[RMDB]
RNA sequence: GGGAACGACUCGAGUAGAGUCGAAAACAGCGCCCAGCCAGCGCAAAGCGGUUCUGUCAACCCUUGUUGGCAGGUACGGCCGCCGUACCAAAUUGUACGAGGCCGCACACGCAGAUGUUCGUGGGUCGCAGGACAUCCGAUUCGUCGGAUGUCCUGCAAAAGAAACAACAACAACAAC
Reactivity to 2A3 in 0.01 (KOAc 150mM, MgCl2 10mM, bicine 150mM(pH8.5), 24C), signal-to-noise 1, nucleotides 027 to 126: c020a030g010c030g000c070c010c000a030g050c040c010a020g000c060g000c040a030a010a000g000c020g000g000u180u080c040u030g020u020c020a000a020c060c150c000u070u300g000u010u000g000g000c000a010g080g020u040a020c020g000g000c000c020g050c140c010g010u010a010c000c090a220a130a230u230u170g000u000a010c010g020a000g000g000c050c000g000c010a030c000a010c000g010c000a050g060a250u060g060u090u080c060g070u050g040g000g050u090c010
Reactivity to DMS in 0.01 (KOAc 150mM, MgCl2 10mM, bicine 150mM(pH8.5), 24C), signal-to-noise 2, nucleotides 027 to 126: c210a080g020c120g000c000c000c040a090g000c030c040a300g030c070g010c050a030a250a200g000c030g040g000u010u000c000u020g020u000c000a000a040c010c300c300u010u030g010u000u000g000g000c000a010g010g040u000a020c010g000g000c020c000g010c200c030g000u000a010c000c190a110a050a180u040u020g030u000a000c000g020a300g020g020c000c000g000c040a000c030a150c010g010c030a050g050a300u000g000u000u010c110g000u000g000g000g010u000c070

This 177-nucleotide RNA was probed chemically with 2A3 and DMS. High 2A3 reactivity points to a flexible backbone, as in loops and unpaired stretches. Source: RMDB library OK2TRN, as collected in RNAgym. The DMS profile rests on 814 reads. For 2A3 the reverse transcriptase was SuperScript II with manganese.